[RMDB]
Annotation
Source: RMDB library OK2TRN, as collected in RNAgym. An RNA of 177 nucleotides, treated with 2A3 and DMS and read out base by base.

RNA sequence: GGGAACGACUCGAGUAGAGUCGAAAAAGGCUGGGAACAAGUGUAUGAGGACAUAGUGGACUGUGCCGACCCUGAACACUUCACCUCAGGUGAUCCAGGUAUGACAUUGCCUCUGCAUAUCAUACCGAUACGAACUACCGUUCGCGGUAGUUCGUAUAAAAGAAACAACAACAACAAC
Reactivity to 2A3 in 0.01 (KOAc 150mM, MgCl2 10mM, bicine 150mM(pH8.5), 24C), signal-to-noise 2, nucleotides 027 to 126: a000g150g010c040u030g000g020g000a120a020c080a060a020g040u030g010u070a190u210g060a070g050g020a040c030a050u130a070g080u070g100g090a100c050u050g010u040g080c050c000g060a080c030c010c000u030g080a050a020c020a000c000u030u010c030a040c050c030u080c070a010g050g060u050g030a030u000c040c060a020g000g000u030a010u000g020a010c070a220u040u100g020c020c110u190c130u300g000c010a000u000a010u030c010a000u010a010c000c010g010
Reactivity to DMS in 0.01 (KOAc 150mM, MgCl2 10mM, bicine 150mM(pH8.5), 24C), signal-to-noise 3, nucleotides 027 to 126: a060g010g010c020u010g020g000g000a140a290c180a070a080g010u000g020u000a030u000g030a090g000g000a100c100a060u000a030g040u020g010g010a110c040u000g020u000g010c030c020g000a100c080c040c020u000g020a070a050c070a060c030u000u000c100a110c260c020u020c050a070g010g020u010g000a050u000c040c100a100g000g010u000a020u000g000a020c040a030u000u000g020c000c250u010c240u000g030c010a030u000a050u000c020a010u000a010c010c020g020
2A3 adducts were read by reverse transcription with SuperScript II with manganese.